[RMDB]
Structure probing data (DMS and 2A3) for a 177-nucleotide construct. The data come from the RNA Mapping Database (RMDB), library TTRDES. In probing experiments dimethyl sulfate is read out at A N1 and C N3, which are open when not base-paired.
RNA sequence: GGGAACGACUCGAGUAGAGUCGAAAAGAUAUGGAACGACGGAUGAAGGCGAUGAAGUCGGUUCGGAAACGAACCGAUGGAGCCUCAUUUCGUUCCUAAGUCAAAACGCAGGGGUUCGCCCCUGCGACCAUAUAGUCCAGUUCGCUGGACUAUAUGGAAAAGAAACAACAACAACAAC
Reactivity to DMS in 0.01 (KOAc 150mM, MgCl2 10mM, bicine 150mM(pH8.5), 24C), signal-to-noise 9, nucleotides 027 to 126: g000a020u000a080u010g000g000a010a000c000g030a050c300g010g000a120u010g020a150a040g020g020c010g010a120u020g000a180a190g000u000c000g010g010u000u000c000g000g000a020a010a040c000g010a000a000c000c000g000a000u000g000g000a020g020c000c010u000c040a030u000u000u000c000g030u000u000c000c010u000a000a090g000u000c010a130a080a140a150c030g010c000a010g010g010g000g020u000u010c300g000c000c000c000c000u000g000c010g000a040
Reactivity to 2A3 in 0.01 (KOAc 150mM, MgCl2 10mM, bicine 150mM(pH8.5), 24C), signal-to-noise 9, nucleotides 027 to 126: g000a000u020a010u050g000g000a000a000c020g050a010c130g110g040a040u190g300a300a130g030g000c070g300a300u020g000a000a000g010u010c000g000g010u000u010c000g000g000a000a010a000c000g000a000a000c010c000g000a000u010g000g000a000g010c000c010u000c010a010u120u160u050c000g000u000u010c000c000u000a010a000g010u000c020a000a020a080a140c030g000c000a000g000g030g020g010u090u170c240g260c010c000c000c010u000g000c000g000a000